[RMDB]
RNA sequence: GGGAACGACUCGAGUAGAGUCGAAAAGAUAUGGAGUAGAAAGGCGAAGAACUUAUGCCUCUUCGGAAACGAAUGCAUAAGGGAGCCUAAUACUCCUAAGUCAAAGACCCGUGUUCGCACGGGUCAACCCGAAGCUAUAGUUCGCUAUAGCUUCGGGAAAAGAAACAACAACAACAAC
Reactivity to 2A3 in 0.01 (KOAc 150mM, MgCl2 10mM, bicine 150mM(pH8.5), 24C), signal-to-noise 1, nucleotides 027 to 126: g070a010u060a030u140g010g010a020g030u020a010g060a110a300a020g020g000c010g230a300a000g040a100a030c010u000u000a000u030g000c020c000u040c110u040u040c030g020g010a030a070a000c000g010a050a080u290g000c000a000u010a000a000g000g000g000a010g000c010c000u010a000a000u010a000c000u010c000c000u000a150a010g050u050c040a200a060a020g000a000c020c010c000g000u000g040u070u070c300g000c090a000c000g030g000g000u030c000a010a000
Reactivity to DMS in 0.01 (KOAc 150mM, MgCl2 10mM, bicine 150mM(pH8.5), 24C), signal-to-noise 1, nucleotides 027 to 126: g020a000u000a300u020g020g000a000g010u000a010g000a060a140a060g010g010c010g020a030a170g000a180a100c000u000u000a000u000g000c000c080u000c070u010u000c010g040g000a100a060a110c020g020a020a020u010g000c000a000u020a000a000g000g050g000a070g010c000c000u020a020a260u000a000c000u010c000c000u000a020a080g000u020c020a180a110a190g020a010c000c000c000g030u000g020u000u020c200g000c030a020c030g010g000g040u000c000a000a020

Chemical mapping of a 177-nucleotide RNA with 2A3 and DMS. Source: RMDB library TTRDEL, as collected in RNAgym. For DMS, 758 sequencing reads were counted.